[RMDB]
RNA sequence: GGGAACGACUCGAGUAGAGUCGAAAAGCAAGUCGCAUCGCAAUACCGCGGCAAGUGGAGUUAGCGAGAGGAGGCUGGGUUUUGGCUUCCUUAAGCAAUCGGUCACCGAGAAGGUGUGGUCGUUACCUAGACAGUUUUCUGUUCGCAGAAAACUGAACCUAAGUGAUCACUUCGGUGAUCACUUAGGAAAAGAAACAACAACAACAAC
Reactivity to DMS in 0.01 (KOAc 150mM, MgCl2 10mM, bicine 150mM(pH8.5), 24C), signal-to-noise 2, nucleotides 027 to 156: g000c050a070a140g000u000c040g000c000a180u010c020g010c040a090a070u000a190c100c070g000c030g000g000c040a120a120g000u000g000g030a190g010u010u000a100g040c000g010a290g030a030g010g010a010g030g020c000u000g000g000g000u000u000u000u010g030g010c040u000u000c010c030u000u000a000a300g040c020a040a120u020c010g000g010u000c030a190c000c010g000a160g030a120a080g000g030u000g010u000g040g020u000c000g000u000u000a040c020c040u010a140g010a160c050a040g010u000u000u000u000c040u010g040u030u000c300g030c050a000g000a010a010a010a020c000u000g010a000a100
Reactivity to 2A3 in 0.01 (KOAc 150mM, MgCl2 10mM, bicine 150mM(pH8.5), 24C), signal-to-noise 6, nucleotides 027 to 156: g030c040a060a020g030u040c010g010c010a050u060c060g020c120a100a160u070a160c050c080g000c010g010g000c060a060a040g030u040g050g060a150g050u080u180a040g040c020g000a030g000a010g030g010a010g030g000c010u090g120g210g040u070u120u130u300g020g000c010u010u000c000c000u000u000a030a000g000c000a010a040u040c030g030g020u050c010a010c020c020g040a060g060a200a060g070g020u100g010u040g040g010u000c010g010u010u030a150c000c000u030a050g020a120c010a010g000u000u000u010u000c010u010g050u040u080c250g020c080a000g000a000a000a000a010c000u010g000a010a020